[RMDB]
The data come from the RNA Mapping Database (RMDB), library OK2TST. Structure probing data (DMS and 2A3) for a 177-nucleotide construct. For DMS, 7,590 sequencing reads were counted.
RNA sequence: GGGAACGACUCGAGUAGAGUCGAAAAAGCGUUGGGGAUACAAAGGACAGGGAUGUGACCUUCUGGGCUUUUAUUUGGAGGCACUUAGGUGUGAAAGAAUUCAGAGAAAGUGGAAGUCACGUUUAAGUGACUUCGGUCUUUUCGAAGACCGAAGUCAAAAAGAAACAACAACAACAAC
Reactivity to DMS in 0.01 (KOAc 150mM, MgCl2 10mM, bicine 150mM(pH8.5), 24C), signal-to-noise 5, nucleotides 027 to 126: a080g010c080g010u010u000g010g000g010g010a110u000a060c120a060a080a090g000g000a080c090a080g010g000g010a080u010g010u000g000a090c060c070u000u010c050u000g030g010g020c040u000u000u010u000a090u010u000u000g000g000a070g000g010c040a020c030u000u010a070g020g020u000g010u010g000a070a070a120g000a100a100u000u000c040a060g010a080g010a030a050a050g020u000g010g010a040a060g010u010c020a020c050g010u000u000u010a070a100g010
Reactivity to 2A3 in 0.01 (KOAc 150mM, MgCl2 10mM, bicine 150mM(pH8.5), 24C), signal-to-noise 2, nucleotides 027 to 126: a010g050c070g020u070u070g050g030g000g010a050u080a130c050a030a150a040g050g030a020c030a030g040g020g040a040u050g050u060g080a080c000c000u070u000c040u070g060g020g020c050u080u100u020u080a120u100u070u090g040g000a030g000g050c010a000c040u010u050a070g090g000u030g000u020g070a070a020a030g110a050a100u070u070c040a030g020a000g050a080a050a030g060u080g030g010a010a020g020u020c010a010c020g030u050u070u040a070a030g040

For DMS the reverse transcriptase was MarathonRT. The reactions ran in a buffer of 150 mM KOAc, 10 mM MgCl2 and 150 mM bicine (pH 8.5), at 24 C.